The record gives the reactivity of an RNA of 177 nucleotides to DMS and 2A3. Reactivities are given for positions 27 through 126. The 2A3 profile rests on 1,214 reads. DMS (dimethyl sulfate) methylates the pairing face of unpaired adenines and cytosines.
[RMDB]
RNA sequence: GGGAACGACUCGAGUAGAGUCGAAAAGAUCAACAACGAAGCGCCGAAGACCCUGGAAGACGUGUCCAUGGGUGCCCGCCCGAACUCCCGGAAGGAAGUGAAGCUGUAUCGCGACAAGUGCACCAAAAUGUAAUGAUCCUUUCGAGGAUCAUUACAUAAAAGAAACAACAACAACAAC
Reactivity to DMS in 0.01 (KOAc 150mM, MgCl2 10mM, bicine 150mM(pH8.5), 24C), signal-to-noise 2, nucleotides 027 to 126: g010a100u000c050a070a110c080a050a090c080g010a150a080g000c100g030c050c040g020a070a110g000a060c070c040c010u010g000g010a070a090g000a100c130g000u000g000u000c030c010a020u000g030g000g010u000g040c000c020c010g010c040c000c050g010a120a060c080u010c020c000c000g000g010a080a070g020g010a050a070g000u000g010a070a110g010c040u000g010u010a040u010c050g030c040g000a050c090a090a060g010u000g020c040a060c030c070a040a080a090
Reactivity to 2A3 in 0.01 (KOAc 150mM, MgCl2 10mM, bicine 150mM(pH8.5), 24C), signal-to-noise 1, nucleotides 027 to 126: g010a100u100c050a020a110c010a030a060c050g110a040a000g020c030g060c060c010g000a050a030g070a060c020c020c030u010g080g000a110a020g140a050c060g080u070g040u060c010c020a070u140g080g000g000u010g030c000c000c000g080c020c000c010g080a060a090c040u020c140c000c000g020g080a070a050g000g020a000a070g030u080g050a080a000g000c010u020g050u050a090u120c020g000c000g080a010c020a100a040g010u070g060c040a070c020c070a000a080a120